[RMDB]
RNA sequence: GGGAACGACUCGAGUAGAGUCGAAAAGAAGAGGAUCAGAUACCCUCGUAGUCUUAACUAUAAACUAUGCCACUUAUGUGUUGUCUAACUCAUCUUUUUGAGUUUGGCAUUGCAUUAUGAGAAAUCACCAGGCCUUAUCUUUCGAGAUAAGGCCUGGAAAAGAAACAACAACAACAAC
Reactivity to DMS in 0.01 (KOAc 150mM, MgCl2 10mM, bicine 150mM(pH8.5), 24C), signal-to-noise 1, nucleotides 027 to 126: g010a020a050g000a000g040g000a050u060c050a020g030a090u050a090c110c020c000u080c010g020u000a050g000u000c110u000u050a030a060c160u000a080u030a100a050a110c040u000a010u000g000c020c060a060c140u030u050a060u000g000u000g010u020u000g000u000c000u010a000a000c000u010c000a030u000c290u000u020u280u030u000g000a000g030u000u000u000g000g010c040a000u040u000g100c000a010u010u050a000u010g000a100g020a110a010a090u010c050a150
Reactivity to 2A3 in 0.01 (KOAc 150mM, MgCl2 10mM, bicine 150mM(pH8.5), 24C), signal-to-noise 3, nucleotides 027 to 126: g080a040a020g010a040g050g010a020u100c080a040g030a120u190a150c010c000c000u030c030g000u000a000g010u000c190u240u060a130a140c020u040a060u150a140a060a040c050u010a040u200g050c000c040a050c030u090u050a020u030g010u000g010u000u010g000u000c000u010a010a010c000u030c010a040u040c190u000u280u070u050u050g000a000g000u000u010u000g000g000c000a010u040u060g000c000a010u040u050a090u140g110a060g110a010a040a040u090c030a020
Notes
The record gives the reactivity of an RNA of 177 nucleotides to DMS and 2A3. For 2A3 the reverse transcriptase was SuperScript II with manganese. High DMS reactivity at an A or C suggests that its Watson-Crick edge is free.